RNA sequence: GGGAACGACUCGAGUAGAGUCGAAAAUCGCUAAGCUUCGGCUUAGCGAAAAGUCGGGGCUUGAGGGCGUGUACGGCUGCGCACACACACGACCCUCAAGCCAAAGCAUCGUGUUCGCACGAUGCAACGAAACGCUAUACUUCGGUAUAGCGUUUCGAAAAGAAACAACAACAACAAC
Reactivity to 2A3 in 0.01 (KOAc 150mM, MgCl2 10mM, bicine 150mM(pH8.5), 24C), signal-to-noise 2, nucleotides 027 to 126: u010c010g030c020u000a000a010g010c000u030u130c250g070g000c000u020u010a010g000c000g000a000a010a000a000g030u040c010g090g070g000g000c000u000u000g010a010g020g000g010c000g010u000g020u010a030c070g060g000c060u150g060c110g100c040a050c010a000c000a000c020a010c120g300a300c000c000c000u010c000a010a000g000c010c000a000a000a000g000c000a000u000c000g010u000g030u070u040c190g060c120a000c000g010a000u000g010c000a010a000
Reactivity to DMS in 0.01 (KOAc 150mM, MgCl2 10mM, bicine 150mM(pH8.5), 24C), signal-to-noise 2, nucleotides 027 to 126: u000c000g010c000u000a010a000g010c000u000u010c150g010g020c000u000u000a020g020c000g000a010a030a030a070g010u010c090g000g010g010g000c010u000u000g000a010g000g010g000c010g020u000g020u000a070c090g000g000c020u000g050c130g020c080a100c100a070c070a040c010a030c010g000a170c000c000c000u010c000a000a020g010c000c020a010a000a120g000c000a000u000c000g010u000g010u000u010c220g010c010a010c000g000a010u000g010c000a040a090
The record gives the reactivity of an RNA of 177 nucleotides to 2A3 and DMS.
Reactivities are given for positions 27 through 126.
The reactions ran in a buffer of 150 mM KOAc, 10 mM MgCl2 and 150 mM bicine (pH 8.5), at 24 C.
For DMS the reverse transcriptase was MarathonRT.
Reactivities are rounded to 0.1 and cut off at 0 and 3.
For DMS, 1,743 sequencing reads were counted.
Source: RMDB library M2PK50, as collected in RNAgym.